[RMDB]
RNA sequence: GGGAACGACUCGAGUAGAGUCGAAAAAUUGAAAAUGGUGCGAAAGGCCCAGCAGCUGCUAACGUAACUGCAAUCUAAGCUUAAUUGCUUAACUGAUUUUCUAAAGCCCGUCAUUUUUAAUGACGGGGGACACUAGGUUAUUCGUAACCUAGUGUCCAAAAGAAACAACAACAACAAC
Reactivity to DMS in 0.01 (KOAc 150mM, MgCl2 10mM, bicine 150mM(pH8.5), 24C), signal-to-noise 3, nucleotides 027 to 126: a130u040u030g000a020a030a040a050u000g000g000u020g000c050g030a060a110a110g000g010c010c030c050a110g020c010a010g010c030u000g010c030u000a080a090c300g010u000a020a100c020u000g010c060a120a090u010c110u000a020a060g010c000u010u000a120a120u030u010g010c010u000u000a030a080c130u010g000a050u020u000u030u010c000u010a050a100a150g030c030c000c000g030u000c000a000u000u000u030u020u050a040a020u000g000a010c000g000g000g010
Reactivity to 2A3 in 0.01 (KOAc 150mM, MgCl2 10mM, bicine 150mM(pH8.5), 24C), signal-to-noise 9, nucleotides 027 to 126: a000u110u110g030a030a020a000a030u090g040g020u130g060c050g110a240a080a050g120g010c000c010c010a010g000c000a000g000c010u060g000c030u110a160a030c090g040u030a040a030c020u020g000c010a020a030u060c040u070a010a020g010c000u050u090a090a060u300u090g020c010u050u020a030a040c030u080g130a120u030u020u030u030c050u080a060a080a150g090c000c010c010g020u000c000a010u000u070u080u120u300a070a020u000g000a000c000g000g000g000
Source: RMDB libraries RFM100 and RFMREP, as collected in RNAgym. The record gives the reactivity of an RNA of 177 nucleotides to DMS and 2A3. The RNA was probed in 150 mM KOAc, 10 mM MgCl2 and 150 mM bicine (pH 8.5) at 24 C. Reactivities are given for positions 27 through 126. DMS adducts were read by reverse transcription with MarathonRT.